[RMDB]
RNA sequence: GGGAACGACUCGAGUAGAGUCGAAAAGAUAUGGAACGGAAUGGUAAAUGAGUACCUUCGAUAAGGCUCCGUCGGAAACGACGGAAGCCUUUUGACGAAGACUCAUUUACCAUUCCGUUCCUAAGUCGUUAGAAUAGAGCUUCGGCUCUAUUCUAACAAAAGAAACAACAACAACAAC
Reactivity to DMS in 0.01 (KOAc 150mM, MgCl2 10mM, bicine 150mM(pH8.5), 24C), signal-to-noise 2, nucleotides 027 to 126: g010a100u020a300u000g010g010a010a020c010g020g010a000a000u000g010g000u000a000a000a000u000g000a000g020u010a130c300c010u000u000c010g030a260u000a010a010g010g020c000u000c000c000g020u000c000g000g010a150a070a270c000g000a020c010g000g010a020a030g020c000c010u000u000u000u000g010a300c190g000a020a010g010a060c010u010c010a000u000u000u020a000c000c000a000u000u000c000c000g010u010u010c010c010u010a020a090g010u000c120
Conditions: 150 mM KOAc, 10 mM MgCl2 and 150 mM bicine (pH 8.5), 24 C. This 177-nucleotide RNA was probed chemically with DMS. For DMS the reverse transcriptase was MarathonRT. The data come from the RNA Mapping Database (RMDB), library TTRINS. Reactivities are rounded to 0.1 and cut off at 0 and 3.